[RMDB]
Structure probing data (2A3 and DMS) for a 207-nucleotide construct.
Source: RMDB library OK3TST, as collected in RNAgym.
RNA sequence: GGGAACGACUCGAGUAGAGUCGAAAACUUUUUUCACCAAAAUAUUGGUGCUGUCUCAUCAUCUAUCCUGUUCACCUAUUUAUCUUAUGACAGAUAUUAUUCUGUUUUGCCUCUGCUGGCUUGCUUUCUUCAGGAUUCAUCAGCAUUCUACAUAACAGUAGUAAAUGCGUUUCGACGCAUUUACUACAAAAGAAACAACAACAACAAC
Reactivity to 2A3 in 0.01 (KOAc 150mM, MgCl2 10mM, bicine 150mM(pH8.5), 24C), signal-to-noise 4, nucleotides 027 to 156: c020u150u080u000u020u150u110c080a060c070c010a080a040a040a040u250a120u050u130g040g000u040g000c040u040g050u030c030u030c030a130u010c010a040u020c060u090a080u050c000c020u010g020u050u040c030a060c040c020u030a110u080u170u050a070u090c050u100u170a110u200g020a010c010a010g060a010u040a100u210u090a110u180u020c010u010g050u010u010u060u080g000c000c020u060c040u060g040c020u010g000g000c000u010u050g000c000u070u060u060c020u060u050c040a010g040g000a060u090u010c030a080u020c010a030g030c000a020u070u090c020u090a070c040a070u230a170a010c030a100
Reactivity to DMS in 0.01 (KOAc 150mM, MgCl2 10mM, bicine 150mM(pH8.5), 24C), signal-to-noise 1, nucleotides 027 to 156: c070u000u000u020u000u000u000c040a300c040c000a050a070a140a190u000a100u010u000g030g030u000g050c060u000g020u000c020u000c000a090u000c070a090u000c050u020a090u010c010c040u020g030u000u000c020a050c050c030u000a110u000u000u000a040u020c080u000u020a130u010g010a080c010a020g000a070u000a130u000u010a130u000u000c020u010g020u000u010u010u010g010c040c060u000c060u010g000c060u000g000g010c040u010u020g010c020u000u000u000c020u030u010c020a130g000g010a070u000u020c050a090u000c080a110g030c000a060u000u000c030u000a060c110a150u000a090a070c070a210